[RMDB]
RNA sequence: GGGAACGACUCGAGUAGAGUCGAAAACAAUUUGACAGAUCUCACGUAUACUUCAGGGAAAUUGAAUUGGUCAUCGUGAUUGGGUGAAUCUAUGUUUAUAUAUCUCAUAACUAUAAGAUUCAGUACACUAUAGGACCUAGUUCGCUAGGUCCUAUAGAAAAGAAACAACAACAACAAC
Reactivity to DMS in 0.01 (KOAc 150mM, MgCl2 10mM, bicine 150mM(pH8.5), 24C), signal-to-noise 3, nucleotides 027 to 126: c100a080a150u000u020u000g010a090c110a110g000a100u000c070u000c020a050c080g000u010a090u000a050c050u010u000c050a070g020g010g010a050a060a110u010u000g000a050a070u000u010g020g000u000c060a060u010c060g030u000g000a070u020u010g000g000g020u000g000a010a000u010c010u010a040u000g000u000u000u000a040u010a130u020a120u060c130u010c050a050u000a020a030c040u010a060u000a050a080g020a040u000u000c010a040g000u000a100c170a140
Reactivity to 2A3 in 0.01 (KOAc 150mM, MgCl2 10mM, bicine 150mM(pH8.5), 24C), signal-to-noise 3, nucleotides 027 to 126: c050a100a140u120u090u110g090a070c050a020g130a080u000c020u040c020a040c030g040u070a040u030a130c010u070u060c020a020g070g050g150a040a140a120u120u030g020a050a060u090u110g030g020u040c010a030u040c060g040u020g040a080u030u130g040g050g050u030g000a000a000u030c020u010a030u040g020u010u090u010a100u020a030u030a150u100c050u010c140a050u050a070a010c040u130a040u020a240a050g000a010u030u000c010a000g040u030a040c060a010